[RMDB]
Chemical mapping of a 207-nucleotide RNA with 2A3 and DMS.
The reactions ran in a buffer of 150 mM KOAc, 10 mM MgCl2 and 150 mM bicine (pH 8.5), at 24 C.
Values cover nucleotides 27 to 156.
The 2A3 profile rests on 2,298 reads.
For 2A3 the reverse transcriptase was SuperScript II with manganese.

RNA sequence: GGGAACGACUCGAGUAGAGUCGAAAAACUCGCGGGAGCUUGGCAUGAAUAUUCAGCGCUGCCCGAGAACUUCCUGAAAGGCUGCAAAUGGGCCCCUGACGGUACCUGCCUGCUGACCAACAGCGAUGACAACAUCCUGCGGAUAUAUAACCUGCCAAUAGGAUCAUAAUUUCGAUUAUGAUCCUAUAAAAGAAACAACAACAACAAC
Reactivity to 2A3 in 0.01 (KOAc 150mM, MgCl2 10mM, bicine 150mM(pH8.5), 24C), signal-to-noise 4, nucleotides 027 to 156: a000c030u030c020g020c120g000g010g010a020g030c050u120u110g090g020c080a180u110g030a150a070u250a170u300u130c020a040g020c020g010c050u070g070c010c000c000g000a000g000a000a010c020u020u020c010c000u000g030a100a080a000g050g010c060u060g050c110a040a020a180u150g010g040g010c010c010c000c050u100g050a080c060g000g080u080a190c000c010u010g000c010c010u010g010c010u030g030a110c020c030a040a080c010a020g020c030g080a050u040g010a040c020a120a030c010a070u020c000c020u030g010c030g020g050a010u050a000u000a000u040a170a080c110c050u140g040c140c000a020
Reactivity to DMS in 0.01 (KOAc 150mM, MgCl2 10mM, bicine 150mM(pH8.5), 24C), signal-to-noise 2, nucleotides 027 to 156: a070c040u000c020g040c050g000g020g010a090g010c010u020u000g000g010c010a130u010g020a120a170u010a100u030u000c030a070g010c040g000c030u000g030c000c020c000g000a070g000a060a160c080u000u000c010c020u000g010a130a150a120g010g000c000u000g010c000a040a130a120u000g020g010g000c050c020c000c030u000g010a070c030g000g040u000a030c010c020u000g010c060c030u000g000c030u000g000a130c040c020a080a090c060a030g010c060g010a090u000g010a080c100a070a190c020a130u000c000c000u000g000c000g000g000a140u000a090u010a120u010a090a070c040c020u010g000c040c040a130